[RMDB]
RNA sequence: GGGAACGACUCGAGUAGAGUCGAAAAUGUUUGUCUUCAGAACACAAUAAAAUCCAGGGAGAGUGUCCUGUUCUUCCUACAGACGUCACUGGGACAUCUUAUUCUUUAAUUAAUUCAGUCAACUAAAAUUGGUCAAAUACCUGCUCUCUGUGCCAGACUGCACUAUGGGAUUCGUCCCAUAGUGCAGAAAAGAAACAACAACAACAAC
Reactivity to 2A3 in 0.01 (KOAc 150mM, MgCl2 10mM, bicine 150mM(pH8.5), 24C), signal-to-noise 2, nucleotides 027 to 156: u060g020u000u000u050g000u000c020u160u110c160a110g090a200a000c000a020c080a130a190u300a200a200a030a030u050c120c020a020g030g000g000a040g000a000g040u030g040u010c000c040u040g050u020u000c010u040u040c010c040u000a080c040a030g150a020c050g040u030c060a040c090u030g020g000g060a000c070a040u000c020u050u030a100u220u020c080u030u110u130a220a200u170u100a070a150u160u100c020a010g130u000c020a020a020c040u160a150a000a000a110u100u110g000g000u070c050a050a040a040u060a060c000c010u000g020c010u060c000u020c030u070g000u000g070c050c000a020g020a070
Conditions: 150 mM KOAc, 10 mM MgCl2 and 150 mM bicine (pH 8.5), 24 C. This 207-nucleotide RNA was probed chemically with 2A3. The 2A3 profile rests on 444 reads. It was measured as part of the RMDB library OK3TST.